[RMDB]
RNA sequence: GGGAACGACUCGAGUAGAGUCGAAAAAGCACUUUUUCCGCUACGUCUGUAGAGUAGUUCUCUCCGCAUUCAUGCUUGUGAGCAAGUGCGCCAAUGUGAAGAUCGAACACCGGGUAGAGUGCCAGCUUGCCAAUAGCGGUUGUAAGCCCUUGCGAGGUCAUACAUCACUCUUCGGAGUGAUGUAUGAAAAAGAAACAACAACAACAAC
Reactivity to 2A3 in 0.01 (KOAc 150mM, MgCl2 10mM, bicine 150mM(pH8.5), 24C), signal-to-noise 4, nucleotides 027 to 156: a010g040c040a030c030u040u050u010u050u020c020c010g010c060u030a020c020g190u120c160u230g090u090a040g000a030g020u120a010g020u060u020c020u000c010u000c010c040g000c020a030u010u050c020a050u180g030c020u070u040g030u100g160a080g080c020a020a000g020u030g060c030g030c070c050a060a060u050g030u060g050a060a060g020a070u170c100g030a080a020c020a020c050c070g050g000g010u050a050g010a030g070u060g000c000c010a030g010c010u060u090g050c010c020a130a150u070a140g030c040g050g000u000u020g060u050a070a030g000c000c000c000u010u040g020c060g070a040g040g040
Reactivity to DMS in 0.01 (KOAc 150mM, MgCl2 10mM, bicine 150mM(pH8.5), 24C), signal-to-noise 3, nucleotides 027 to 156: a090g010c050a050c070u000u000u000u000u000c010c050g010c040u010a030c020g010u000c140u030g040u010a170g010a090g050u000a090g010u010u000c010u010c010u000c030c000g000c020a050u000u000c030a090u000g000c000u000u010g040u000g010a210g020c040a060a050g040u000g000c020g050c070c080a060a100u010g050u000g010a070a070g000a080u000c080g000a080a070c030a110c100c040g020g000g010u000a090g010a070g000u010g010c020c030a100g030c040u000u000g030c040c060a090a140u010a120g000c000g020g010u000u000g010u000a060a120g010c010c010c020u010u000g010c030g010a210g030g000
Structure probing data (2A3 and DMS) for a 207-nucleotide construct. Values are in units of 0.01, from 0 to 300, in steps of 10. Reactivities are given for positions 27 through 156. Conditions: 150 mM KOAc, 10 mM MgCl2 and 150 mM bicine (pH 8.5), 24 C. For DMS the reverse transcriptase was MarathonRT.